This 207-nucleotide RNA was probed chemically with DMS and 2A3. For DMS, 3,249 sequencing reads were counted. The RNA was probed in 150 mM KOAc, 10 mM MgCl2 and 150 mM bicine (pH 8.5) at 24 C. For 2A3 the reverse transcriptase was SuperScript II with manganese.
[RMDB]
RNA sequence: GGGAACGACUCGAGUAGAGUCGAAAAGCGCAAAUCCACAAACGCCAACGAUGAGCGUUUCGCUGUAGCCGCUUAAGGCAACAGCCGGGGCCGCCUGAGCCCUGUUACCAAAGACGGCUGGGGGGGGUAAUUACUUAUUGCUUCGGCAAUAAGUAAAUGAUUAUAUAUCGUUCGCGAUAUAUAAUCAAAAAGAAACAACAACAACAAC
Reactivity to DMS in 0.01 (KOAc 150mM, MgCl2 10mM, bicine 150mM(pH8.5), 24C), signal-to-noise 2, nucleotides 027 to 156: g020c030g020c030a060a120a070u000c040c020a070c020a030a240a030c010g010c030c030a080a190c100g000a120u000g030a200g030c020g000u000u000u010c020g040c000u000g030u010a090g020c010c030g020c250u000u000a070a230g040g000c010a040a010c030a040g000c030c060g060g010g030g040c020c070g000c060c050u000g020a130g020c030c010c000u000g010u010u010a140c060c030a080a120a160g020a200c300g030g010c050u000g000g000g000g000g000g000g000g000u000a050a070u010u000a000c010u000u000a010u000u010g010c000u000u000c300g050g030c000a010a000u000a000a020g020u000a000a020a150
Reactivity to 2A3 in 0.01 (KOAc 150mM, MgCl2 10mM, bicine 150mM(pH8.5), 24C), signal-to-noise 2, nucleotides 027 to 156: g040c020g000c050a060a030a030u060c070c000a070c070a100a210a050c170g000c040c060a140a060c090g090a100u100g020a050g040c000g010u020u060u080c040g030c010u000g010u030a040g000c000c000g040c220u260u210a080a100g020g000c030a020a010c000a010g000c000c010g000g010g010g000c020c080g010c000c030u010g010a000g010c000c000c000u010g030u050u110a050c000c020a000a000a000g010a000c010g000g000c000u080g040g010g000g000g000g000g000g000u000a020a070u060u000a000c000u000u000a000u010u000g000c000u020u000c050g090g000c010a000a000u000a000a000g000u000a000a000a000
Source: RMDB library M2RFPK, as collected in RNAgym. Reactivities are given for positions 27 through 156.